[RMDB]
RNA sequence: GGGAACGACUCGAGUAGAGUCGAAAAUCCCAAAGCGGAUUUAGCUCGGUUGGGAGAGAGCCAGACCGAAGAUCUGGUGGUCCUGUGUUCGAUCCACAGAAUUCGCACCAUAAACAACGGGAGAUUCAUUAUUACCUGAGUUCGCUCAGGUAAUAAUAAAAGAAACAACAACAACAAC
Reactivity to 2A3 in 0.01 (KOAc 150mM, MgCl2 10mM, bicine 150mM(pH8.5), 24C), signal-to-noise 9, nucleotides 027 to 126: u010c010c000c000a030a040a000g020c010g010g010a010u020u040u090a050g030c020u010c040g130g050u190u240g090g070g000a040g000a010g000a000g030c000c000a010g000a020c020c110g180a100a040g060a170u060c030u080g030g020u060g030g070u070c010c020u030g010u000g020u020u020c030g010a020u000c010c000a010c010a010g040a000a020u020u010c010g000c020a050c030c010a060u210a150a140a050c090a050a030c060g020g070g010a090g010a050u100u070c030
Reactivity to DMS in 0.01 (KOAc 150mM, MgCl2 10mM, bicine 150mM(pH8.5), 24C), signal-to-noise 7, nucleotides 027 to 126: u010c000c000c000a060a100a080g020c020g010g010a040u000u010u000a090g010c040u000c040g010g000u030u010g010g000g000a050g000a200g020a300g010c010c000a020g000a020c030c090g030a160a140g000a240u020c060u000g000g020u000g000g010u010c090c030u000g010u010g000u000u000c060g000a280u020c070c010a060c050a050g020a070a030u000u000c010g000c030a170c130c070a080u020a080a090a110c180a070a080c070g000g010g000a130g010a100u040u030c090